[RMDB]
RNA sequence: GGGAACGACUCGAGUAGAGUCGAAAAAAAAGAUAUGGAGUUUCUACCCACCUCCAUCUGAACGAAGAACAUACGUCGGAAACGACGUAUGGGAGUUCUAGAUGGAGAGGAAACUCCUAAGUCAAAACCGUAAUAUAUACUUCGGUAUAUAUUACGGAAAAGAAACAACAACAACAAC
Reactivity to 2A3 in 0.01 (KOAc 150mM, MgCl2 10mM, bicine 150mM(pH8.5), 24C), signal-to-noise 2, nucleotides 027 to 126: a000a010a000a050g080a040u140a100u110g000g000a030g010u030u020u020c020u100a300c080c070c020a030c000c000u000c000c000a010u000c010u000g000a010a000c050g220a300a110g000a030a000c000a000u000a000c000g010u000c000g010g000a010a050a050c010g000a000c000g000u000a000u010g010g000g010a030g020u010u020c030u040a030g000a020u010g000g000a000g000a000g010g000a000a000a000c000u000c010c000u010a070a000g090u080c060a000a030a170a210
Reactivity to DMS in 0.01 (KOAc 150mM, MgCl2 10mM, bicine 150mM(pH8.5), 24C), signal-to-noise 2, nucleotides 027 to 126: a060a040a140a200g010a040u000a100u000g010g000a020g000u000u000u010c000u000a190c040c010c070a300c090c010u000c000c000a000u000c000u020g000a020a000c010g000a170a090g000a080a170c000a010u000a010c000g030u000c000g000g000a060a040a150c000g000a010c000g020u000a010u000g000g000g000a090g010u000u000c000u010a020g010a020u000g000g000a010g020a100g010g000a000a000a000c000u000c000c000u000a020a080g020u010c050a060a160a080a160
Conditions: 150 mM KOAc, 10 mM MgCl2 and 150 mM bicine (pH 8.5), 24 C. This 177-nucleotide RNA was probed chemically with 2A3 and DMS. High DMS reactivity at an A or C suggests that its Watson-Crick edge is free. Source: RMDB library TTRDES, as collected in RNAgym. For 2A3, 3,804 sequencing reads were counted. For DMS the reverse transcriptase was MarathonRT. Values are in units of 0.01, from 0 to 300, in steps of 10.